[RMDB]
RNA sequence: GGGAACGACUCGAGUAGAGUCGAAAAUCUGCAAUCUUCGGAUUGCAGAAAAUACGGAUCCAUACGGAUCCAUACGGAUCCAUACGGAUCGAUACGGAUCCAAAACGUACCUCUUCGGAGGUACGAACAAUCGAUUUCACUUCGGUGAAAUCGAUUGAAAAGAAACAACAACAACAAC
Reactivity to 2A3 in 0.01 (KOAc 150mM, MgCl2 10mM, bicine 150mM(pH8.5), 24C), signal-to-noise 1, nucleotides 027 to 126: u020c000u000g000c000a000a010u000c030u090u030c090g140g010a000u000u000g000c000a010g010a000a040a000a010u120a030c060g090g050a030u050c010c000a000u060a110c060g010g000a000u010c010c000a010u080a040c120g050g010a000u000c000c000a010u040a110c080g030g030a050u050c010g010a000u050a080c030g000g030a000u000c000c010a070a040a000a020c000g000u010a000c000c010u020c010u000u110c180g080g000a000g000g010u000a000c010g000a010a000
Reactivity to DMS in 0.01 (KOAc 150mM, MgCl2 10mM, bicine 150mM(pH8.5), 24C), signal-to-noise 1, nucleotides 027 to 126: u010c000u010g010c000a000a010u000c020u000u010c200g000g000a020u000u000g060c000a000g000a000a010a090a200u010a100c150g000g020a000u020c000c030a100u010a000c130g020g010a000u000c000c000a030u030a030c220g000g000a000u000c000c000a090u000a020c060g000g010a020u000c000g030a080u000a160c130g000g000a040u000c020c010a030a030a100a240c010g000u000a000c000c000u000c000u010u000c150g010g000a040g000g010u000a000c000g010a070a130